[RMDB]
Description
An RNA of 207 nucleotides, treated with 2A3 and read out base by base. For 2A3 the reverse transcriptase was SuperScript II with manganese. The 2A3 profile rests on 706 reads. The RNA was probed in 150 mM KOAc, 10 mM MgCl2 and 150 mM bicine (pH 8.5) at 24 C.
RNA sequence: GGGAACGACUCGAGUAGAGUCGAAAAGCAAGGCGUCCCUGGAAGACGUUUCGGAGAUGUGCGAGAGUAAUGUCAUUAUCAUUGACGAGUGCGGCCUGUUGCUCAGGCACAUGUUGCAGGUGGUGGUGUUUUUUUACUACUUCUACAACGCCGUCUGGAGCGAAUGCUAGUUCGCUAGCAUUCGCUCAAAAGAAACAACAACAACAAC
Reactivity to 2A3 in 0.01 (KOAc 150mM, MgCl2 10mM, bicine 150mM(pH8.5), 24C), signal-to-noise 1, nucleotides 027 to 156: g100c010a060a040g050g000c030g050u070c030c010c020u010g100g000a040a000g080a020c070g000u010u160u170c140g060g020a130g000a090u070g010u050g070c040g000a070g000a010g080u030a020a050u100g050u070c030a020u070u090a070u090c050a070u110u050g020a030c030g030a020g060u050g000c090g000g000c000c040u040g020u090u120g010c050u030c150a030g000g170c030a000c000a030u130g000u050u010g070c030a000g020g000u000g000g000u000g000g060u010g020u090u140u000u000u000u000u000a030c000u030a030c010u020u000c000u020a030c020a080a000c020g010c000c000g000u040c080u060g020